[RMDB]
RNA sequence: GGGAACGACUCGAGUAGAGUCGAAAAAUGGCACAUACCAUGCGUAUCUCGGAGUUUUCCUUUGAUGAUGACCCAAUUAUGGAAGAACUUGUAGCUGUUUCAGAAGAAUGUGCUUGUGAUGAUGCUAGGCAUUAUAAUGAUUCGUCAUUAUAAUGCCAAAAGAAACAACAACAACAAC
Reactivity to 2A3 in 0.01 (KOAc 150mM, MgCl2 10mM, bicine 150mM(pH8.5), 24C), signal-to-noise 8, nucleotides 027 to 126: a000u080g020g000c020a020c010a060u090a060c020c000a010u050g000c020g020u050a040u020c110u020c040g090g020a050g010u030u020u050u060c020c000u060u080u110g090a090u040g010a030u080g080a080c000c010c020a050a070u160u080a070u110g060g020a040a040g030a080a050c030u060u060g060u140a040g050c030u030g080u180u110u100c060a050g010a080a000g030a050a080u040g000u030g030c000u030u020g040u030g020a030u010g020a030u070g010c020u050a060
Reactivity to DMS in 0.01 (KOAc 150mM, MgCl2 10mM, bicine 150mM(pH8.5), 24C), signal-to-noise 9, nucleotides 027 to 126: a090u000g000g010c010a030c060a040u000a080c050c020a050u000g010c050g020u000a040u000c070u000c060g010g010a050g010u000u000u000u000c030c010u000u010u010g010a070u000g000a090u010g010a130c040c020c020a100a070u000u000a050u000g010g000a050a050g000a040a030c050u000u000g010u010a070g020c040u000g000u010u000u000c050a050g010a110a080g000a060a060u000g010u000g010c000u000u000g010u010g000a050u000g000a110u000g010c050u000a100